[RMDB]
RNA sequence: GGGAACGACUCGAGUAGAGUCGAAAAGGAUGGCCAGUUGCUUGUCGCCGUGGGCACGCUUGAAGUCGUCGGUAAUCUUCACCAGCUGGGGGAACAGUUCGCGUAGCUUGGCCUUGGCCUCGGUGCGCUACUAAUAUGACUUCGGUCAUAUUAGUAGAAAAGAAACAACAACAACAAC
Reactivity to 2A3 in 0.01 (KOAc 150mM, MgCl2 10mM, bicine 150mM(pH8.5), 24C), signal-to-noise 7, nucleotides 027 to 126: g060g010a050u070g030g020c030c020a050g060u100u060g050c050u060u070g050u090c040g000c060c020g040u070g010g010g000c030a010c050g020c020u050u110g050a080a010g030u060c040g020u010c020g010g040u070a070a080u040c060u120u080c030a030c040c000a020g020c040u040g000g000g000g010g030a030a040c010a040g030u100u100c050g000c020g090u030a030g030c020u020u050g040g020c010c020u030u080g080g000c010c020u020c050g000g020u040g020c040g000
Reactivity to DMS in 0.01 (KOAc 150mM, MgCl2 10mM, bicine 150mM(pH8.5), 24C), signal-to-noise 9, nucleotides 027 to 126: g000g010a070u000g010g010c020c040a090g010u010u000g010c050u000u000g020u010c070g020c050c060g010u000g010g010g020c040a060c100g010c050u000u000g010a080a080g010u000c060g020u000c050g010g010u000a080a080u010c070u000u000c050a090c060c040a100g000c050u000g000g000g000g010g000a080a090c150a070g010u000u000c090g010c060g020u000a040g010c020u000u000g010g010c010c040u000u010g020g010c010c010u000c070g010g010u000g010c130g010